[RMDB]
RNA sequence: GGGAACGACUCGAGUAGAGUCGAAAAGAAGAGUCUCUCACGCGGUAGGAGCAAGCCCAUAGCGAUAGGGGGAGAUGCUGGGAGUUAGAGGAGACCUUAGGGGAGACCGAAGCGAGGAGGAAAGCAAGAGGCUUGCGGUUCGCCGCAAGCAAAAGAAACAACAACAACAAC
Reactivity to 2A3 in 0.01 (KOAc 150mM, MgCl2 10mM, bicine 150mM(pH8.5), 24C), signal-to-noise 3, nucleotides 027 to 129: g120a020a000g020a000g050u050c040u030c010u010c010a100c080g020c040g030g010u040a050g030g030a080g030c070a010a010g020c000c000c010a030u110a040g050c040g080a010u130a070g000g000g000g000g000a050g030a020u120g000c080u020g030g040g000a010g000u050u080a010g030a020g000g000a020g010a010c000c000u060u060a040g010g000g000g020a010g000a010c000c030g020a010a010g050c020g000a010g020g020a000g000g000a080a000a000g030c010a020a020g020a010g070
Reactivity to DMS in 0.01 (KOAc 150mM, MgCl2 10mM, bicine 150mM(pH8.5), 24C), signal-to-noise 4, nucleotides 027 to 129: g030a060a100g020a070g000u040c040u020c020u010c050a130c090g040c070g040g000u000a040g000g000a050g010c020a110a080g030c100c020c060a150u070a000g070c130g000a100u040a050g010g010g020g010g000a060g050a030u080g020c080u010g040g040g010a090g030u000u010a000g000a080g060g000a100g040a030c090c050u000u080a160g000g020g030g000a090g020a110c080c060g000a080a030g030c150g050a020g020g010a080g040g030a040a000a000g020c110a050a050g000a030g000